[RMDB]
RNA sequence: GGGAACGACUCGAGUAGAGUCGAAAAGAAUAAAGGGCAGCGUUCGUGUUUGGAACUUCCGGUUCGACCACUCACACAAACACGCAUACGCUUAUGUAGUGUUGGUCGCCAUAUUGUUAAAAAGAAAGGCAUUAUUAAAUUUCGAUUUAAUAAUGCCAAAAGAAACAACAACAACAAC
Reactivity to 2A3 in 0.01 (KOAc 150mM, MgCl2 10mM, bicine 150mM(pH8.5), 24C), signal-to-noise 7, nucleotides 027 to 126: g090a050a060u240a090a110a050g020g030g020c040a020g000c040g020u040u060c020g010u060g030u020u070u050g050g010a070a040c000u160u060c150c060g060g010u050u130c050g040a070c040c000a050c020u110c020a030c010a010c000a080a020a000c000a010c020g030c030a040u060a180c080g030c080u080u060a090u140g120u100a080g040u010g000u080u070g020g010u020c020g000c010c010a070u090a070u150u080g040u030u080a080a060a040a000a000g160a030a050a000
Reactivity to DMS in 0.01 (KOAc 150mM, MgCl2 10mM, bicine 150mM(pH8.5), 24C), signal-to-noise 5, nucleotides 027 to 126: g000a100a070u040a060a120a070g000g000g010c060a040g030c000g020u010u010c010g010u000g010u010u000u000g000g000a070a080c110u020u010c070c080g000g000u050u030c030g010a090c100c020a060c080u020c090a090c110a300c050a030a010a020c010a000c030g000c300a020u020a050c100g000c050u040u000a020u030g010u020a070g010u000g000u010u000g000g000u000c010g000c030c020a100u040a110u010u010g000u000u010a050a030a060a060a080g010a060a080a110